[RMDB]
RNA sequence: GGGAACGACUCGAGUAGAGUCGAAAAGGACCAACUCCGUCAGGAGAACAAAAGAUGCCUGAACGUCAAGUGGGUUUGCCUUGAUGGUUGCCCUCAGGUAUAUGGGAAAGUACACAGAUGGGUAGUCGUCCGUCACUAGGUUCGCCUAGUGACGGACAAAAGAAACAACAACAACAAC
Reactivity to 2A3 in 0.01 (KOAc 150mM, MgCl2 10mM, bicine 150mM(pH8.5), 24C), signal-to-noise 1, nucleotides 027 to 126: g030g020a000c020c000a000a020c000u040c000c030g190u120c050a080g030g000a070g050a070a010c050a020a180a000a040g110a060u040g100c010c000u030g070a090a020c000g120u140c090a090a000g060u130g030g090g020u090u190u270g040c040c020u010u030g090a080u190g040g000u010u040g040c030c000c000u020c000a000g000g110u000a040u040a030u100g100g010g030a030a120a000g040u090a020c090a000c040a050g160a120u190g040g040g000u090a050g040u010c090
Reactivity to DMS in 0.01 (KOAc 150mM, MgCl2 10mM, bicine 150mM(pH8.5), 24C), signal-to-noise 1, nucleotides 027 to 126: g000g010a180c000c000a140a050c010u000c010c000g000u000c260a070g020g000a030g000a240a240c060a130a000a040a130g000a110u010g000c000c000u000g000a050a030c110g010u000c200a080a070g010u020g010g010g010u000u000u010g050c020c010u030u010g060a100u000g000g000u000u000g000c010c100c040u000c020a010g020g000u000a000u000a030u010g000g000g000a080a010a080g000u010a060c260a010c040a010g010a060u010g030g100g000u000a000g000u010c050
Notes:
Source: RMDB library OK2TST, as collected in RNAgym. An RNA of 177 nucleotides, treated with 2A3 and DMS and read out base by base. For DMS, 673 sequencing reads were counted. The reactions ran in a buffer of 150 mM KOAc, 10 mM MgCl2 and 150 mM bicine (pH 8.5), at 24 C.